This 177-nucleotide RNA was probed chemically with DMS and 2A3. Source: RMDB libraries RFM100 and RFMREP, as collected in RNAgym. For 2A3 the reverse transcriptase was SuperScript II with manganese.
[RMDB]
RNA sequence: GGGAACGACUCGAGUAGAGUCGAAAAAUAAGACUAGGUACAAUGGAACAUACUACGUUCAACCAUCAUUUGAUGUUCAAGAGAGUGAAGGAUAUGGGUCUCCUACAAAAUAAGGAGUACGAAUAUGUCGAAUAGCCAUUUUCGAAUGGCUAUUCGAAAAAGAAACAACAACAACAAC
Reactivity to DMS in 0.01 (KOAc 150mM, MgCl2 10mM, bicine 150mM(pH8.5), 24C), signal-to-noise 4, nucleotides 027 to 126: a100u030a070a050g040a060c040u010a040g020g040u000a060c080a180a070u010g010g010a070a050c050a110u020a090c120u010a090c110g060u010u000c080a090a140c080c050a040u000c040a080u010u000u010g010a110u000g010u010u010c190a100a010g000a110g000a040g010u000g000a060a040g000g020a060u010a040u000g000g030g000u000c000u000c000c000u000a080c150a060a090a080a120u020a080a050g000g020a020g030u010a030c040g000a040a020u020a060u010g000
Reactivity to 2A3 in 0.01 (KOAc 150mM, MgCl2 10mM, bicine 150mM(pH8.5), 24C), signal-to-noise 4, nucleotides 027 to 126: a030u130a000a060g030a010c050u050a040g060g010u100a090c100a080a050u140g060g010a080a000c000a020u180a080c010u080a030c050g010u020u040c010a050a040c020c000a000u070c020a050u070u060u170g060a040u020g020u110u200c070a110a030g060a020g000a020g050u040g080a070a070g050g040a020u060a050u090g100g000g020u000c000u000c000c000u040a070c090a080a140a030a020u240a100a010g020g020a000g000u060a010c020g010a060a070u090a070u140g080

Source information: The RNA was probed in 150 mM KOAc, 10 mM MgCl2 and 150 mM bicine (pH 8.5) at 24 C. Reactivities are given for positions 27 through 126.